Background
The record gives the reactivity of an RNA of 177 nucleotides to DMS and 2A3. 2A3 adducts were read by reverse transcription with SuperScript II with manganese. Conditions: 150 mM KOAc, 10 mM MgCl2 and 150 mM bicine (pH 8.5), 24 C.
[RMDB]
RNA sequence: GGGAACGACUCGAGUAGAGUCGAAAAGAUAUGGACGGCGUACUGGCAACAGCUAUCAUCGGAAACGAUGAUAGACAUGCCACUACGCCCGUCCUAAGUCAAAGUCAGGUUGUUCGCAACCUGACAACUUAGUAUUAAAGUUCGCUUUAAUACUAAGAAAAGAAACAACAACAACAAC
Reactivity to DMS in 0.01 (KOAc 150mM, MgCl2 10mM, bicine 150mM(pH8.5), 24C), signal-to-noise 9, nucleotides 027 to 126: g000a070u000a300u010g000g010a010c010g000g000c010g030u000a010c200u000g000g010c000a040a100c300a210g010c010u000a000u000c000a000u000c000g010g010a150a120a230c000g010a010u000g000a010u000a000g010a020c100a190u000g000c010c000a010c100u000a010c000g000c140c030c020g010u000c000c000u000a020a090g010u010c050a080a110a140g010u000c000a010g010g000u000u000g010u000u010c270g010c010a010a010c010c000u000g010a000c010a020a040
Reactivity to 2A3 in 0.01 (KOAc 150mM, MgCl2 10mM, bicine 150mM(pH8.5), 24C), signal-to-noise 7, nucleotides 027 to 126: g030a030u100a040u170g000g010a000c010g010g010c010g010u010a010c020u010g020g000c020a090a040c050a280g050c010u000a000u010c000a000u000c010g030g030a080a050a030c020g000a010u010g010a000u000a000g010a010c000a010u040g000c000c000a000c000u010a000c000g000c010c000c000g000u000c000c000u010a070a020g010u010c070a190a040a010g000u000c000a000g000g020u010u020g040u060u150c300g010c180a000a000c000c000u000g000a000c000a000a000